The record gives the reactivity of an RNA of 177 nucleotides to DMS and 2A3. 2A3 adducts were read by reverse transcription with SuperScript II with manganese.
[RMDB]
RNA sequence: GGGAACGACUCGAGUAGAGUCGAAAAGUGGGUGUCCGCUGGUUCUCAAAUGGUGAGAUUAACCGGUACGGUACAUGGAAUUAACCACUCCAGUCAUUCUUACGGCCAACCGAAAGAGUGAGGACAUGAAUGGUCUUUGGUUCGCCAAAGACCAUUCAAAAGAAACAACAACAACAAC
Reactivity to DMS in 0.01 (KOAc 150mM, MgCl2 10mM, bicine 150mM(pH8.5), 24C), signal-to-noise 1, nucleotides 027 to 126: g010u020g000g010g090u030g000u000c000c000g020c000u000g010g030u030u020c000u020c000a110a050a100u000g030g010u000g010a020g070a150u030u070a060a050c050c000g000g000u020a050c070g130g020u030a010c080a100u000g000g000a040a060u000u000a060a240c040c080a070c030u000c010c010a110g030u010c000a040u000u000c010u000u000a120c030g000g000c190c240a100a100c030c030g000a060a050a000g000a020g030u000g000a000g030g010a010c260a020u000
Reactivity to 2A3 in 0.01 (KOAc 150mM, MgCl2 10mM, bicine 150mM(pH8.5), 24C), signal-to-noise 2, nucleotides 027 to 126: g050u030g000g050g040u000g000u020c000c040g000c010u020g030g000u070u010c000u000c000a100a150a070u300g080g040u080g010a020g000a120u150u180a000a000c020c000g000g020u140a100c050g000g040u080a010c050a080u040g010g090a050a150u110u040a210a000c000c000a000c010u020c000c000a000g040u000c000a030u000u000c000u040u050a030c000g020g000c100c000a190a280c030c020g000a100a000a000g040a010g000u000g000a050g010g050a060c050a030u140

DMS adducts were read by reverse transcription with MarathonRT. The data come from the RNA Mapping Database (RMDB), libraries RFM100 and RFMREP. The reactions ran in a buffer of 150 mM KOAc, 10 mM MgCl2 and 150 mM bicine (pH 8.5), at 24 C.